[RMDB]
RNA sequence: GGGAACGACUCGAGUAGAGUCGAAAAUCAGCAGGCAUAUUUGGUGUAAAACCAGCUGUGUCUUUUGAUUAUCUUAUUAGGGAGGCUAAGACUAGAGUUUUAGUCGUCGUUAAUUCCCAAGAUGUCUGCAGCCGUGAGUUCGCUCACGGCAAAAGAAACAACAACAACAAC
Reactivity to 2A3 in 0.01 (KOAc 150mM, MgCl2 10mM, bicine 150mM(pH8.5), 24C), signal-to-noise 4, nucleotides 027 to 129: u000c000a000g000c000a010g000g020c000a000u000a030u040u000u000g070g000u060g040u280a090a110a020a030c000c000a000g010c000u030g000u000g000u000c000u000u030u030u010g000a010u000u030a030u090c090u040u030a060u040u040a080g040g090g000a000g000g000c000u000a000a030g000a010c030u130a060g060a060g260u010u000u000u010a000g000u010c010g140u000c000g120u020u010a010a010u040u000c000c000c000a000a000g050a030u090g070u050c050u040g020c070a020
Reactivity to DMS in 0.01 (KOAc 150mM, MgCl2 10mM, bicine 150mM(pH8.5), 24C), signal-to-noise 3, nucleotides 027 to 129: u020c020a090g040c100a040g010g030c030a040u040a020u000u000u000g030g020u000g020u070a120a090a140a060c020c000a010g050c060u030g020u000g030u000c030u020u050u030u000g030a020u020u000a120u010c130u000u100a070u050u020a000g000g000g000a070g030g030c010u040a000a000g020a030c000u050a100g020a110g050u000u000u000u000a060g030u030c040g030u000c060g020u080u010a000a000u010u050c000c000c040a090a050g010a130u000g020u040c020u040g010c120a180